Source: RMDB library OK3TST, as collected in RNAgym.
The record gives the reactivity of an RNA of 207 nucleotides to 2A3 and DMS.
Values are in units of 0.01, from 0 to 300, in steps of 10.
The RNA was probed in 150 mM KOAc, 10 mM MgCl2 and 150 mM bicine (pH 8.5) at 24 C.
For DMS the reverse transcriptase was MarathonRT.
The DMS profile rests on 1,694 reads.
RNA sequence: GGGAACGACUCGAGUAGAGUCGAAAAUACCAGCCUAUUCAAUCAGGAUGCCCUUAGCAAGGCCGCCGUGAAUAUGCUGACUGAGCAGGGCGUGGUCCCUGGCCUAGAGGGUGCUAUCGAUGAGGUUAUGGGCAACGUAGAUAACCCAACGUCAGACCGGGAGGUAAUGAUUCGUCAUUACCUCCCGAAAAGAAACAACAACAACAAC
Reactivity to 2A3 in 0.01 (KOAc 150mM, MgCl2 10mM, bicine 150mM(pH8.5), 24C), signal-to-noise 2, nucleotides 027 to 156: u090a010c000c020a000g010c020c010u020a030u050u030c090a050a200u050c050a030g080g000a080u100g000c010c000c000u080u070a020g030c090a070a010g020g010c010c010g000c010c000g020u050g060a090a050u110a060u100g020c030u010g030a150c060u100g130a030g000c030a030g010g030g000c090g110u110g060g060u200c050c000c010u020g070g000c000c000u080a050g010a030g070g040g020u090g000c010u020a070u070c080g150a090u080g040a060g000g070u120u090a020u090g030g050g020c030a030a000c050g050u120a040g020a150u080a060a040c010c010c000a040a000c140g100u090c080a010g050a090c030
Reactivity to DMS in 0.01 (KOAc 150mM, MgCl2 10mM, bicine 150mM(pH8.5), 24C), signal-to-noise 1, nucleotides 027 to 156: u000a110c010c070a090g010c000c020u040a090u000u000c030a100a120u010c100a130g030g010a230u000g030c000c000c010u000u010a140g040c140a140a070g010g010c010c050g010c030c000g030u010g000a100a050u000a090u000g000c020u000g010a170c060u000g000a110g030c020a000g030g040g010c020g000u010g030g010u000c010c000c020u000g040g040c010c030u000a050g010a220g000g020g000u010g050c040u000a090u020c030g000a150u000g020a140g050g010u000u000a070u000g050g010g020c050a030a100c090g020u000a050g030a210u010a140a050c000c000c020a080a060c060g000u010c030a080g010a240c100